[RMDB]
RNA sequence: GGGAACGACUCGAGUAGAGUCGAAAAGGGAGACUUGCUCUCGCCGUGGGACAGCAGCUUACCCCCUGCUCGGUGCUGGUAUAUACAAGGUCCCCGUCGGACUGAGCUUUGAUGCCUGGGAGCGUAACCUCCAGAGUAUCUUCGGAUACUCUGGAGGAAAAGAAACAACAACAACAAC
Reactivity to DMS in 0.01 (KOAc 150mM, MgCl2 10mM, bicine 150mM(pH8.5), 24C), signal-to-noise 1, nucleotides 027 to 126: g000g000g020a040g000a080c110u020u000g000c040u000c030u000c050g010c000c050g000u000g020g000g020a040c020a050g000c070a060g000c060u000u000a300c020c010c020c240c030u010g000c050u020c080g000g010u010g000c040u030g000g020u000a110u010a070u020a050c080a040a160g020g020u000c010c020c020c200g000u000c040g000g000a130c090u000g010a060g000c040u000u000u000g000a140u000g010c020c000u000g000g000g010a070g020c040g000u000a070a120

This 177-nucleotide RNA was probed chemically with DMS.
The DMS profile rests on 1,158 reads.
It was measured as part of the RMDB library OK2TRN.